RNA sequence: GGGAACGACUCGAGUAGAGUCGAAAAGGCCGGGCAUGGUGGCUCGCACCCCUAAUCCCAGCACUUUGGGAGGCUGAGGCGGGGGAUCACCUGAGGUCAGGAGUUCGAGACCAGACUGACCAACGUGGAGAAACCCCAUCUCUACUAAAAAUACAAACACUGAUAUGGUAUUCGUACCAUAUCAGUGAAAAGAAACAACAACAACAAC
Reactivity to 2A3 in 0.01 (KOAc 150mM, MgCl2 10mM, bicine 150mM(pH8.5), 24C), signal-to-noise 1, nucleotides 027 to 156: g110g040c130c000g050g000g000c050a070u200g120g020u060g200g000c030u000c000g000c030a170c010c000c010c040u080a080a060u010c010c000c000a030g030c060a090c220u180u240u090g000g000g020a050g040g000c040u060g060a070g020g000c060g020g010g000g000g000a020u040c010a050c030c000u000g050a060g000g010u010c010a000g000g040a080g070u120u200c180g060a070g090a150c020c030a060g070a100c010u000g000a010c000c000a080a040c040g010u110g000g060a070g020a030a030a030c020c000c000c000a010u020c010u030c000u030a050c020u050a070a040a040a010a000u180a080c030a030a050a000
The record gives the reactivity of an RNA of 207 nucleotides to 2A3. Conditions: 150 mM KOAc, 10 mM MgCl2 and 150 mM bicine (pH 8.5), 24 C. Values cover nucleotides 27 to 156.